About this RNA:
An RNA of 207 nucleotides, treated with 2A3 and DMS and read out base by base. The DMS profile rests on 9,969 reads. Values cover nucleotides 27 to 156. The RNA was probed in 150 mM KOAc, 10 mM MgCl2 and 150 mM bicine (pH 8.5) at 24 C. Source: RMDB library OK3TST, as collected in RNAgym.
RNA sequence: GGGAACGACUCGAGUAGAGUCGAAAAGAUAAUGAUAAACAUGAUUUGGAUAGUUUUCACAUCGCCACCAUAGUAAGAUAUUGCUAUUAAUAUCGUGAUGCGCUAAUAGACAUCCAUGGUUGCCAGGUUUAAUCAAUUUACCAUCUUUAACCUCGCCAGAUUGUGUUACAUUCGUGUAACACAAUCUAAAAGAAACAACAACAACAAC
Reactivity to 2A3 in 0.01 (KOAc 150mM, MgCl2 10mM, bicine 150mM(pH8.5), 24C), signal-to-noise 9, nucleotides 027 to 156: g030a020u110a100a060u080g030a020u060a060a060a020c030a040u080g030a100u120u070u110g060g020a050u070a200g120u060u040u070u090c100a100c020a070u050c040g000c020c010a020c010c000a020u030a040g060u100a090a070g030a050u040a040u090u050g050c050u050a040u250u110a140a040u010a010u070c020g030u030g020a020u020g010c050g000c070u030a100a070u050a250g060a060c000a010u000c020c010a010u030g040g010u020u040g040c030c040a040g000g080u010u020u070a050a060u070c030a020a030u040u080u100a080c040c020a030u010c010u020u050u030a040a050c010c020u050c040g050c090c020
Reactivity to DMS in 0.01 (KOAc 150mM, MgCl2 10mM, bicine 150mM(pH8.5), 24C), signal-to-noise 4, nucleotides 027 to 156: g020a080u000a100a060u000g000a090u000a030a050a080c040a110u010g000a100u000u000u010g000g010a080u010a120g020u000u000u000u000c120a130c130a080u000c020g020c020c020a040c020c030a060u000a070g020u010a080a120g010a130u010a070u000u000g020c080u010a080u010u000a030a020u000a020u000c040g010u000g010a030u000g000c050g010c050u000a090a130u010a070g010a030c030a070u000c010c030a080u000g020g030u000u000g020c030c060a100g020g020u000u000u000a050a080u000c040a050a100u000u000u010a130c010c020a120u000c040u000u000u000a050a090c040c010u000c050g020c100c120